Chemical mapping of a 177-nucleotide RNA with DMS. It was measured as part of the RMDB library OK2TRN. For DMS, 766 sequencing reads were counted.

RNA sequence: GGGAACGACUCGAGUAGAGUCGAAAAAGAAAACAAAAGACCAAAUAUCAAAAGAUACAGACAAACUGUUAAAGAAACCACAAAAGCAUUUUUCUCUGGUUUGGGAACUGUAAAAGCUAUGGGACAAGAUCAGUAAAACUUUCGAGUUUUACUGAUCAAAAGAAACAACAACAACAAC
Reactivity to DMS in 0.01 (KOAc 150mM, MgCl2 10mM, bicine 150mM(pH8.5), 24C), signal-to-noise 1, nucleotides 027 to 126: a120g070a060a060a090a060c030a070a210a140a070g010a130c050c020a060a020a130u000a070u000c030a050a060a110a050g010a150u000a030c050a000g000a110c030a100a080a020c000u000g000u000u000a090a030a080g000a010a080a020c170c100a040c120a040a070a050a080g020c040a080u000u010u030u000u000c000u000c010u020g020g010u000u000u000g000g000g000a070a080c090u010g000u000a070a040a040a020g010c080u010a060u000g040g000g040a080c160a100a080